[RMDB]
RNA sequence: GGGAACGACUCGAGUAGAGUCGAAAACAAAUGCUAUGACGCCAGAUGCUCAAUCCAAGCACCACAGUUAGGAUUGUGCUUUUCCUCAUCAAGUCGUGAAAUGAGGUCACGAAGCUCUCAGAGUGUGGCUUAACGCCUACUUCGGUAGGCGUUAAGCAAAAGAAACAACAACAACAAC
Reactivity to 2A3 in 0.01 (KOAc 150mM, MgCl2 10mM, bicine 150mM(pH8.5), 24C), signal-to-noise 1, nucleotides 027 to 126: c010a010a100a020u180g020c000u080a000u190g030a060c050g000c040c010a070g010a110u110g000c000u020c060a020a010u030c010c010a000a000g030c000a010c130c050a090c050a030g080u040u030a050g050g000a000u000u070g000u040g000c000u030u010u020u020c020c000u010c000a080u040c030a050a080g070u190c080g070u080g110a050a030a030u100g060a000g000g050u040c010a010c120g040a110a010g030c000u020c040u060c000a080g060a000g030u150g020u090g080
Reactivity to DMS in 0.01 (KOAc 150mM, MgCl2 10mM, bicine 150mM(pH8.5), 24C), signal-to-noise 1, nucleotides 027 to 126: c110a100a170a080u010g040c080u000a050u000g000a050c140g050c050c060a010g040a090u010g000c000u010c020a010a010u010c030c010a040a140g000c040a120c060c190a070c160a040g040u000u000a290g000g000a020u000u000g000u000g000c000u000u000u000u000c040c040u000c030a020u000c070a110a010g010u020c110g020u000g000a060a090a060u010g000a070g020g000u000c060a050c130g010a110a040g020c020u010c050u000c100a060g030a080g020u010g020u000g000

Chemical mapping of a 177-nucleotide RNA with 2A3 and DMS.
Conditions: 150 mM KOAc, 10 mM MgCl2 and 150 mM bicine (pH 8.5), 24 C.
The DMS profile rests on 747 reads.
Source: RMDB library OK2TRN, as collected in RNAgym.
DMS adducts were read by reverse transcription with MarathonRT.